The record gives the reactivity of an RNA of 177 nucleotides to 2A3 and DMS. Conditions: 150 mM KOAc, 10 mM MgCl2 and 150 mM bicine (pH 8.5), 24 C. For DMS the reverse transcriptase was MarathonRT. The data come from the RNA Mapping Database (RMDB), library OK1LIB.
[RMDB]
RNA sequence: GGGAACGACUCGAGUAGAGUCGAAAAGAAAGAAAAGGUGCCAUAAGCUUUGAUCUUUCCCUGCUAGUGUAGAUCGAGGCAAACACAAUUGUGCUACACUUGCAGAGCACAUAAUGGCACCAAAGAACCUACGCUAAUCGUUCGCGAUUAGCGUAGGAAAAGAAACAACAACAACAAC
Reactivity to 2A3 in 0.01 (KOAc 150mM, MgCl2 10mM, bicine 150mM(pH8.5), 24C), signal-to-noise 3, nucleotides 027 to 126: g030a000a040a000g100a020a140a000a030g000g010u000g000c010c000a020u040a120a050g000c080u040u080u090g020a010u040c020u030u050u020c010c020c010u020g020c030u030a010g040u080g010u130a020g000a050u090c110g000a080g180g000c000a040a110a020c050a000c030a160a280u050u080g000u030g030c010u100a060c050a030c040u010u080g010c070a020g010a010g070c040a020c000a030u130a050a060u020g000g000c010a000c000c000a010a010a010g010a010a000
Reactivity to DMS in 0.01 (KOAc 150mM, MgCl2 10mM, bicine 150mM(pH8.5), 24C), signal-to-noise 2, nucleotides 027 to 126: g000a040a040a040g020a130a010a060a150g000g000u020g000c030c000a000u000a070a130g020c060u030u000u010g020a020u000c020u000u000u000c020c000c000u000g020c020u000a130g020u000g000u000a020g010a020u010c170g040a120g000g000c020a010a050a140c100a120c120a270a150u030u010g010u000g000c000u000a100c040a080c130u060u000g000c110a140g010a020g000c020a000c100a040u020a080a050u000g000g000c000a020c000c010a020a050a090g000a110a110